Description:
An RNA of 177 nucleotides, treated with DMS and 2A3 and read out base by base. For DMS the reverse transcriptase was MarathonRT. Conditions: 150 mM KOAc, 10 mM MgCl2 and 150 mM bicine (pH 8.5), 24 C. Reactivities are given for positions 27 through 126. 2A3 is a SHAPE reagent: it acylates the 2'-hydroxyl of flexible nucleotides of all four kinds. Values are in units of 0.01, from 0 to 300, in steps of 10. 2A3 adducts were read by reverse transcription with SuperScript II with manganese. Source: RMDB library OK1LIB, as collected in RNAgym. The DMS profile rests on 938 reads.
[RMDB]
RNA sequence: GGGAACGACUCGAGUAGAGUCGAAAAGAAUGUAUGUAAACCGUGUGGCACUCAAUGGCCCCGCAAAGAAAGAAAUGCGGCAACAGGUAAAAGUGUGUAAAGCCACAUCAUAAGCAUACGGAAGAAAGCCUCGUAGUAGUUUCGACUACUACGAGGCAAAAGAAACAACAACAACAAC
Reactivity to DMS in 0.01 (KOAc 150mM, MgCl2 10mM, bicine 150mM(pH8.5), 24C), signal-to-noise 1, nucleotides 027 to 126: g080a250a020u000g010u000a000u000g000u000a000a020a210c250c100g000u000g000u000g000g000c000a010c070u000c090a100a180u000g000g000c250c260c000c000g000c000a050a070a100g000a290a100a210g000a040a210a300u000g000c060g110g050c300a080a030c090a080g020g000u000a000a000a030a090g000u000g020u020g000u020a000a000a080g010c000c000a000c000a000u000c210a040u050a000a150g070c000a000u070a020c000g000g000a080a010g090a170a070a090
Reactivity to 2A3 in 0.01 (KOAc 150mM, MgCl2 10mM, bicine 150mM(pH8.5), 24C), signal-to-noise 1, nucleotides 027 to 126: g220a000a020u210g000u010a010u000g070u040a010a170a000c000c070g010u040g010u000g000g000c000a020c170u090c020a020a070u050g070g060c000c000c010c000g000c040a070a150a040g120a040a170a000g100a070a180a100u060g000c000g070g000c000a030a020c040a120g070g010u020a000a010a180a000g060u080g070u000g050u070a160a140a000g000c030c000a000c000a000u030c030a010u000a020a000g000c000a000u080a000c140g000g000a090a000g120a020a100a000